[RMDB]
RNA sequence: GGGAACGACUCGAGUAGAGUCGAAAACAUUGGGAUUUUGAUUGGCAUUGCAUUAAACCUAUAGAGAACUUUUGGUAAUAUCGCCAUUUUGAUGAUGUUAGUUCUGCCUAUCCAUGAACAGGGUAUGUCGUUCACCUAGGUUCGCCUAGGUGAACGAAAAAGAAACAACAACAACAAC
Reactivity to DMS in 0.01 (KOAc 150mM, MgCl2 10mM, bicine 150mM(pH8.5), 24C), signal-to-noise 1, nucleotides 027 to 126: c110a090u010u000g080g040g000a140u010u000u000u010g010a050u010u020g000g020c020a080u000u000g020c030a060u000u000a050a100a140c050c020u000a100u000a090g040a130g010a120a050c090u000u010u010u020g000g020u000a040a070u000a040u000c060g000c060c040a100u000u010u000u040g000a120u000g010a010u000g000u010u010a040g000u030u000c010u000g000c090c050u000a020u010c040c080a060u020g010a030a060c060a060g000g080g040u000a070u000g040
Reactivity to 2A3 in 0.01 (KOAc 150mM, MgCl2 10mM, bicine 150mM(pH8.5), 24C), signal-to-noise 1, nucleotides 027 to 126: c000a040u100u170g000g020g000a030u030u080u080u130g030a040u030u030g020g020c020a010u000u090g000c030a000u010u170a030a080a050c030c010u060a110u190a150g180a020g010a090a120c030u090u050u040u040g080g000u000a060a040u030a050u230c060g050c010c000a090u140u160u030u100g070a080u010g010a000u070g020u040u110a040g000u060u000c000u000g000c000c000u010a010u000c010c050a060u080g100a020a020c020a020g050g200g000u030a110u050g180
An RNA of 177 nucleotides, treated with DMS and 2A3 and read out base by base. The RNA was probed in 150 mM KOAc, 10 mM MgCl2 and 150 mM bicine (pH 8.5) at 24 C. For DMS, 1,003 sequencing reads were counted. DMS adducts were read by reverse transcription with MarathonRT. For 2A3, 643 sequencing reads were counted.